[RMDB]
RNA sequence: GGGAACGACUCGAGUAGAGUCGAAAAGAUAUGGAGAAGAACAACAGCUCCCAUUCGGAAACGAAUGUGGAGACAUGUUCCUCCUAAGUCAAAGACAUGAGACUUUGUUCGCAAAGUCUCAUGUCAAGAUACAAUAACCGUUCGCGGUUAUUGUAUCAAAAGAAACAACAACAACAAC
Reactivity to 2A3 in 0.01 (KOAc 150mM, MgCl2 10mM, bicine 150mM(pH8.5), 24C), signal-to-noise 8, nucleotides 027 to 126: g040a030u070a050u130g010g010a020g020a300a080g010a040a010c010a010a040c050a150g040c000u000c000c000c000a000u000u010c010g020g030a080a050a040c020g010a000a020u060g080u300g030g000a000g050a000c010a030u030g010u000u000c000c000u000c000c000u030a140a030g040u020c050a130a070a070g000a000c000a010u010g000a000g010a000c000u010u020u030g060u070u130c300g000c170a000a000a000g000u010c000u000c000a000u000g000u000c000a000a000
Reactivity to DMS in 0.01 (KOAc 150mM, MgCl2 10mM, bicine 150mM(pH8.5), 24C), signal-to-noise 7, nucleotides 027 to 126: g000a030u000a300u010g010g000a010g000a170a110g010a010a010c000a030a090c270a180g010c000u000c000c000c000a010u000u000c000g010g000a090a070a150c010g010a010a000u000g000u030g030g000a010g000a020c080a090u000g000u000u000c010c000u000c010c000u000a030a130g000u000c030a090a120a130g000a010c000a000u000g000a010g000a020c000u000u000u000g000u010u010c210g010c010a010a000a010g000u000c000u000c000a000u000g000u000c000a010a030

Chemical mapping of a 177-nucleotide RNA with 2A3 and DMS.
Values are in units of 0.01, from 0 to 300, in steps of 10.
The 2A3 profile rests on 29,573 reads.
The DMS profile rests on 12,538 reads.
Conditions: 150 mM KOAc, 10 mM MgCl2 and 150 mM bicine (pH 8.5), 24 C.
DMS adducts were read by reverse transcription with MarathonRT.
2A3 adducts were read by reverse transcription with SuperScript II with manganese.
Values cover nucleotides 27 to 126.